[RMDB]
RNA sequence: GGGAACGACUCGAGUAGAGUCGAAAAUCAGGAUCGCUCGGUCGCGAACGUCGCGUAGGCUGUGUUCGCCGCAGGUCGCCAGCAAUUUCGCCAACACGUCUGAUGUCACCGCCUUGGCGCUCUUGCGAAGACGUUGUCUUGGCGCGGCUCGGAUCGCGCCCUUUCUUCACUUCGGUGAAGAAAGGGCAAAAGAAACAACAACAACAAC
Reactivity to DMS in 0.01 (KOAc 150mM, MgCl2 10mM, bicine 150mM(pH8.5), 24C), signal-to-noise 2, nucleotides 027 to 156: u010c050a170g020g040a090u010c040g000c010u000c010g020g030u010c070g000c010g020a110a140c050g030u010c070g030c040g030u000a130g000g010c020u000g020u010g000u000u000c040g010c050c030g040c030a080g000g020u000c030g000c010c010a110g030c060a050a140u010u010u020c040g000c040c020a040a070c050a040c030g000u000c040u000g000a140u000g000u000c040a110c050c050g000c020c090u000u040g020g040c000g070c050u000c030u000u010g000c030g000a050a060g000a020c030g040u010u010g020u000c010u010u000g010g030c030g000c040g010g010c010u010c010g000g000a080u000c030g000c150
Reactivity to 2A3 in 0.01 (KOAc 150mM, MgCl2 10mM, bicine 150mM(pH8.5), 24C), signal-to-noise 6, nucleotides 027 to 156: u110c030a040g070g070a060u070c040g020c090u030c030g020g030u040c040g020c020g150a080a070c080g030u050c010g010c010g030u080a060g010g050c030u040g040u030g040u140u060c060g030c060c000g000c020a010g010g020u030c010g010c020c000a020g000c030a070a130u100u140u160c070g020c050c030a060a020c040a020c100g100u070c120u160g050a150u120g060u070c050a030c110c080g040c040c030u040u080g010g000c020g000c040u030c020u050u050g020c020g020a020a000g000a010c010g040u060u070g020u030c010u020u110g080g000c000g000c000g000g000c010u030c040g030g010a030u040c020g020c030
Record summary: Structure probing data (DMS and 2A3) for a 207-nucleotide construct. For 2A3 the reverse transcriptase was SuperScript II with manganese. The DMS profile rests on 6,756 reads. For 2A3, 4,700 sequencing reads were counted. The data come from the RNA Mapping Database (RMDB), library OK3TST.